[RMDB]
RNA sequence: GGGAACGACUCGAGUAGAGUCGAAAAUCCGUGGGCAUGGCAUAAAAACUAUUUGCACAUAGAGAUGGUCAUCCGUCUUGCUUCUGUGCAAAUAGUUACUGCCCGAAAGGGUAGUAGGUAGCUUCCGAUUGGCAGAAAUCUUCGGAUUUCUGCCAAUAAAAGAAACAACAACAACAAC
Reactivity to DMS in 0.01 (KOAc 150mM, MgCl2 10mM, bicine 150mM(pH8.5), 24C), signal-to-noise 3, nucleotides 027 to 126: u010c010c000g020u010g000g010g030c160a090u010g010g050c050a140u040a060a030a070a100a030c000u000a000u000u000u010g000c000a000c000a010u000a160g000a000g000a000u000g010g000u040c300a170u030c000c020g090u000c000u000u020g000c170u000u030c190u030g000u000g010c010a000a000a000u000a010g000u000u000a000c000u010g010c000c000c010g000a040a070a180g000g000g020u000a010g050u000a050g000g030u020a150g000c050u030u000c020c060g030
Reactivity to 2A3 in 0.01 (KOAc 150mM, MgCl2 10mM, bicine 150mM(pH8.5), 24C), signal-to-noise 2, nucleotides 027 to 126: u030c040c000g020u170g000g060g010c120a090u120g000g000c070a070u290a130a070a020a010a000c000u000a010u000u020u000g000c000a000c000a000u100a000g020a000g000a000u010g020g020u130c070a230u250c030c000g010u000c010u050u080g080c050u030u070c000u010g010u000g010c000a000a000a000u000a000g000u000u000a000c010u000g000c000c000c000g000a060a030a000g010g000g000u020a000g000u000a000g030g120u060a010g010c000u050u000c000c000g100
An RNA of 177 nucleotides, treated with DMS and 2A3 and read out base by base. The RNA was probed in 150 mM KOAc, 10 mM MgCl2 and 150 mM bicine (pH 8.5) at 24 C. 2A3 adducts were read by reverse transcription with SuperScript II with manganese. Source: RMDB libraries RFM100 and RFMREP, as collected in RNAgym.